[RMDB]
RNA sequence: GGGAACGACUCGAGUAGAGUCGAAAAAGCAGCCUCUAGUUGAUAGAAGAAUGUAGAUAAGGGAAGUCGGCAAAAUAGAUCCGUAACUUCGGGAAAAGGAUUGGCUCUGAGGGUUGGGCCUAGGGGUGAAGUCCCUCUAUUUCGAUAGAGGGACUUCAAAAGAAACAACAACAACAAC
Reactivity to DMS in 0.01 (KOAc 150mM, MgCl2 10mM, bicine 150mM(pH8.5), 24C), signal-to-noise 2, nucleotides 027 to 126: a060g060c030a090g010c030c010u000c060u000a030g020u010u050g000a100u010a060g010a060a060g040a150a050u020g000u030a090g020a130u040a070a140g010g000g020a000a060g000u000c040g000g040c250a080a110a080a030u050a080g000a040u010c000c000g000u000a070a050c090u000u010c050g050g020g000a050a000a070a110g010g000a120u000u000g000g010c080u000c050u000g000a130g030g010g020u060u000g010g020g040c110c050u000a060g020g000g020g010u000
Reactivity to 2A3 in 0.01 (KOAc 150mM, MgCl2 10mM, bicine 150mM(pH8.5), 24C), signal-to-noise 2, nucleotides 027 to 126: a000g050c020a000g020c010c000u080c060u050a060g020u000u220g120a100u070a050g070a040a070g010a080a110u090g080u130a060g090a100u130a150a080g010g050g040a010a020g080u040c060g000g070c060a000a000a090a020u250a100g060a060u060c000c000g000u020a010a110c010u010u040c040g060g000g010a030a120a000a000g030g010a090u050u080g040g000c020u000c000u060g030a050g030g040g040u100u020g000g000g000c000c000u000a000g000g000g000g030u100